[RMDB]
RNA sequence: GGGAACGACUCGAGUAGAGUCGAAAAAAAAGAUAUGGACGCUCCUACCCACCUCCGUGAACUACUCGGAGUACGUGUCGGAAACGACAUGAAACGAGCACGGAGAGGGAGCGUCCUAAGUCAAAAACAAACGUAUCGAGUUCGCUCGAUACGUUUGAAAAGAAACAACAACAACAAC
Reactivity to DMS in 0.01 (KOAc 150mM, MgCl2 10mM, bicine 150mM(pH8.5), 24C), signal-to-noise 1, nucleotides 027 to 126: a010a010a090a010g000a040u000a230u000g000g010a000c000g090c000u040c000c000u000a300c000c000c030a300c120c000u030c000c000g080u000g030a010a120c110u010a300c030u000c030g010g080a110g000u000a080c220g000u000g000u000c030g000g000a060a030a140c000g000a000c000a000u010g000a160a100a140c030g010a070g000c000a000c010g000g010a010g000a120g000g000g000a000g030c020g000u000c000c000u000a000a110g000u080c260a000a080a060a110a220